[RMDB]
RNA sequence: GGGAACGACUCGAGUAGAGUCGAAAAAUAUCAUCGGACACCCGGGGAUGCGCACCCUUUUUUCGGGACUCACCUCCCUGGUUCGAUCCACGGGGGCGGAUGUGGUGGUGAUCAACGGUGAGAAUGCAUAUGAGCAGAUAUUCGUAUCUGCUCAUAUAAAAGAAACAACAACAACAAC
Reactivity to DMS in 0.01 (KOAc 150mM, MgCl2 10mM, bicine 150mM(pH8.5), 24C), signal-to-noise 7, nucleotides 027 to 126: a090u010a080u000c030a020u000c030g010g010a140c080a160c060c030c030g010g000g000g010a040u000g010c040g000c090a100c020c010c220u010u000u000u000u010u010c150g010g010g000a110c060u000c170a060c120c130u000c010c010c020u000g010g010u000u010c080g010a080u000c020c020a060c140g010g010g000g000g030c070g000g010a040u000g020u010g000g020u000g000g010u010g000a150u000c090a070a070c080g010g010u000g010a050g010a160a080u020g000c170
Reactivity to 2A3 in 0.01 (KOAc 150mM, MgCl2 10mM, bicine 150mM(pH8.5), 24C), signal-to-noise 2, nucleotides 027 to 126: a000u120a030u070c020a010u030c000g040g020a010c010a060c040c030c000g050g000g000g000a070u120g140c010g000c030a140c000c000c000u020u060u020u000u100u190c070g010g000g030a050c000u010c040a020c000c000u020c010c010c020u050g010g000u030u040c020g030a060u000c010c010a020c030g010g010g010g000g030c070g050g040a090u090g050u070g050g080u080g000g030u080g020a080u030c040a060a040c040g030g020u010g010a030g100a070a050u120g000c050
Structure probing data (DMS and 2A3) for a 177-nucleotide construct. The 2A3 profile rests on 3,517 reads. Source: RMDB library OK2TST, as collected in RNAgym.